RNA sequence: GGGAACGACUCGAGUAGAGUCGAAAAUAAAAUAGCGUAAUGGACAUUGGGAGUGUACGCUAAGUGUGUGUUGUAUACCUAAGGUGCAAUUGAACACACACACUGUUGCACCUAAUGUCCAAAAAAAGGAUCAUAUCAGAUUCGUCUGAUAUGAUCCAAAAGAAACAACAACAACAAC
Reactivity to 2A3 in 0.01 (KOAc 150mM, MgCl2 10mM, bicine 150mM(pH8.5), 24C), signal-to-noise 1, nucleotides 027 to 126: u160a000a010a010a090u130a080g090c040g040u110a120a080u140g020g030a010c000a010u000u040g000g020g050a110g190u100g050u060a020c050g000c040u020a070a120g000u000g000u000g000u010g000u150u000g090u060a070u030a100c030c030u110a170a050g020g000u050g050c090a060a090u030u250g040a140a000c000a000c010a000c000a000c000a000c020u000g040u080u060g020c010a020c020c000u000a000a010u000g000u000c000c000a000a030a030a000a060a000a010
Reactivity to DMS in 0.01 (KOAc 150mM, MgCl2 10mM, bicine 150mM(pH8.5), 24C), signal-to-noise 3, nucleotides 027 to 126: u000a030a090a100a130u000a080g020c100g000u010a060a150u000g020g000a010c030a020u000u000g010g020g000a140g060u010g000u000a020c070g030c090u000a080a050g020u010g030u010g000u000g010u010u000g020u000a110u010a110c050c020u010a080a130g040g010u010g000c160a070a130u000u040g010a080a040c030a010c000a000c000a010c000a020c060u010g000u000u000g010c010a060c000c000u000a000a010u000g010u000c000c010a000a000a030a010a020a010a050
Source: RMDB library M2PK90, as collected in RNAgym. Chemical mapping of a 177-nucleotide RNA with 2A3 and DMS. The 2A3 profile rests on 1,194 reads. The reactions ran in a buffer of 150 mM KOAc, 10 mM MgCl2 and 150 mM bicine (pH 8.5), at 24 C.